[RMDB]
Annotation: Structure probing data (2A3 and DMS) for a 177-nucleotide construct. 2A3 adducts were read by reverse transcription with SuperScript II with manganese.
RNA sequence: GGGAACGACUCGAGUAGAGUCGAAAAAGGCGAUAAAGAGCGCGUUGUCGUGCUUGAUGCCGAUAAAAUGCGCGUAUCCAAGCGCGAGGCCGAGAAAGAGAACGUCAAGAAGAUGCUUGAAGAGGCCAGUUGGAAUAAGGUUCGCCUUAUUCCAACUAAAAGAAACAACAACAACAAC
Reactivity to 2A3 in 0.01 (KOAc 150mM, MgCl2 10mM, bicine 150mM(pH8.5), 24C), signal-to-noise 3, nucleotides 027 to 126: a020g040g020c030g030a040u150a140a160a020g050a010g000c010g000c030g050u070u150g240u160c030g020u070g030c010u040u100g030a030u220g020c000c000g000a000u060a020a140a010a040u240g020c010g000c030g030u040a070u030c030c020a070a020g010c010g010c030g010a060g000g000c000c020g040a030g090a120a110a010g100a010g020a130a060c040g010u000c050a040a030g070a070a030g090a130u090g050c020u030u020g030a050a010g040a030g060g000c010c010
Reactivity to DMS in 0.01 (KOAc 150mM, MgCl2 10mM, bicine 150mM(pH8.5), 24C), signal-to-noise 6, nucleotides 027 to 126: a090g010g000c020g010a080u000a060a120a160g000a060g010c000g010c030g010u000u000g010u000c020g030u000g020c000u000u010g020a130u010g020c010c010g010a070u010a050a040a100a070u010g010c020g010c020g000u000a060u000c060c060a170a140g010c020g020c020g000a120g010g020c000c020g020a140g010a100a090a100g000a160g000a050a100c070g020u000c040a090a100g000a120a170g000a080u000g030c010u000u010g010a080a110g000a270g010g000c040c040

About this RNA: Source: RMDB library OK2TST, as collected in RNAgym. The RNA was probed in 150 mM KOAc, 10 mM MgCl2 and 150 mM bicine (pH 8.5) at 24 C.